[RMDB]
Annotation
Structure probing data (DMS and 2A3) for a 177-nucleotide construct. For 2A3, 3,359 sequencing reads were counted.
RNA sequence: GGGAACGACUCGAGUAGAGUCGAAAAUUGUGGCCAAUACUGAUCUGGAGACUGCCAUGGAGUCAUGGGUUUAACUCUGGCACAGUGAACCAGCCCCUGUGACACUGUGAGAACAUACACAAGCCUGGGACUAUAGACAUUUCGAUGUCUAUAGUCCAAAAGAAACAACAACAACAAC
Reactivity to DMS in 0.01 (KOAc 150mM, MgCl2 10mM, bicine 150mM(pH8.5), 24C), signal-to-noise 4, nucleotides 027 to 126: u010u000g020u000g010g020c030c050a090a100u010a080c080u010g010a110u000c010u000g010g010a090g010a090c110u010g010c020c020a050u000g010g010a120g010u000c040a050u010g010g000g000u010u010u010a120a070c030u000c020u010g010g000c050a070c050a040g010u010g010a110a120c120c050a070g000c110c020c030c080u000g020u000g000a210c030a030c040u000g020u000g000a100g000a080a050c100a040u000a110c030a050c080a040a090g010c030c020u010g010
Reactivity to 2A3 in 0.01 (KOAc 150mM, MgCl2 10mM, bicine 150mM(pH8.5), 24C), signal-to-noise 3, nucleotides 027 to 126: u050u040g020u080g030g020c000c010a030a010u100a160c050u100g040a150u090c010u030g040g020a060g040a060c050u050g000c040c020a020u050g050g030a120g060u170c020a050u040g000g040g080u030u110u080a100a050c020u030c010u050g000g030c050a010c020a030g020u010g070a060a070c000c010a020g040c030c030c000c000u040g030u050g030a000c000a000c040u000g000u010g010a040g020a050a000c040a050u140a030c050a010c030a030a050g040c000c000u060g070
About this RNA
Reactivities are rounded to 0.1 and cut off at 0 and 3. The data come from the RNA Mapping Database (RMDB), library OK2TRN.